This 207-nucleotide RNA was probed chemically with 2A3. The 2A3 profile rests on 656 reads. The reactions ran in a buffer of 150 mM KOAc, 10 mM MgCl2 and 150 mM bicine (pH 8.5), at 24 C. Source: RMDB library VIROID, as collected in RNAgym.
RNA sequence: GGGAACGACUCGAGUAGAGUCGAAAACCGGGGAGCGCUUUUAAAACUCUCAAAGCGCUUCCCCGCUCCGCUGAGAAGACGGUCCAGUGGCCGCUAGUCGAGCGGACAAAGGUUCGUCUCGCCCUAAAUUCCUGCAGCGGAGAGCGGCGUCCCCAGGCAUUGUAACUAGCUUCGGCUAGUUACAAUGAAAAGAAACAACAACAACAAC
Reactivity to 2A3 in 0.01 (KOAc 150mM, MgCl2 10mM, bicine 150mM(pH8.5), 24C), signal-to-noise 1, nucleotides 027 to 156: c040c000g020g010g000g000a020g000c040g020c030u030u110u100u070a240a300a250a230c070u220c030u050c130a020a020a000g000c020g010c000u140u150c020c000c000c000g020c000u010c010c000g020c000u040g020a020g050a270a020g010a060c030g000g030u000c010c060a050g020u070g070g010c010c020g020c020u030a030g160u170c130g120a000g000c000g010g000a000c000a000a080a040g000g000u030u050c020g010u010c020u010c020g120c020c100c010u140a170a160a070u120u060c020c010u120g010c000a010g010c040g050g000a000g010a010g120c010g040g000c010g010u040c000c000c000c000a010g000g070